Chemical mapping of a 177-nucleotide RNA with 2A3 and DMS. High DMS reactivity at an A or C suggests that its Watson-Crick edge is free. It was measured as part of the RMDB library TTRDEL. The reactions ran in a buffer of 150 mM KOAc, 10 mM MgCl2 and 150 mM bicine (pH 8.5), at 24 C. Values cover nucleotides 27 to 126. Values are in units of 0.01, from 0 to 300, in steps of 10.
RNA sequence: GGGAACGACUCGAGUAGAGUCGAAAAGAUAUGGAGUGAAGGGAGAAGAGAGGGAAUUCUCGGAAACGAGUUAUCCCUCCUUCGAAGAACUUCACUCCUAAGUCAAAGGGAGUCUUCGGACUCCCAACUACCAGGGUAACUUCGGUUACCCUGGUAGAAAAGAAACAACAACAACAAC
Reactivity to 2A3 in 0.01 (KOAc 150mM, MgCl2 10mM, bicine 150mM(pH8.5), 24C), signal-to-noise 1, nucleotides 027 to 126: g070a010u040a010u180g030g000a030g030u010g020a000a020g000g000g070a060g000a070a000g300a010g000a000g050g040g050a070a170u170u000c000u000c020g010g050a060a030a030c000g020a000g000u090u040a150u190c000c000c000u000c000c000u000u000c010g010a050a000g020a020a000c020u000u000c000a000c000u020c000c000u010a010a000g060u000c020a100a110a030g000g030g000a000g000u000c010u090u180c300g140g010a010c000u030c000c000c000a010a000
Reactivity to DMS in 0.01 (KOAc 150mM, MgCl2 10mM, bicine 150mM(pH8.5), 24C), signal-to-noise 2, nucleotides 027 to 126: g000a060u020a300u000g000g010a040g000u000g010a010a000g000g000g020a020g030a010a000g000a120g010a060g000g000g000a020a300u000u000c000u000c000g000g000a050a100a190c010g020a000g000u000u000a110u000c000c000c000u000c000c000u000u000c000g060a030a060g040a160a160c000u000u000c020a010c000u000c000c000u000a030a140g000u000c000a090a080a130g040g010g000a000g020u000c000u000u000c200g000g000a020c000u000c010c000c000a000a000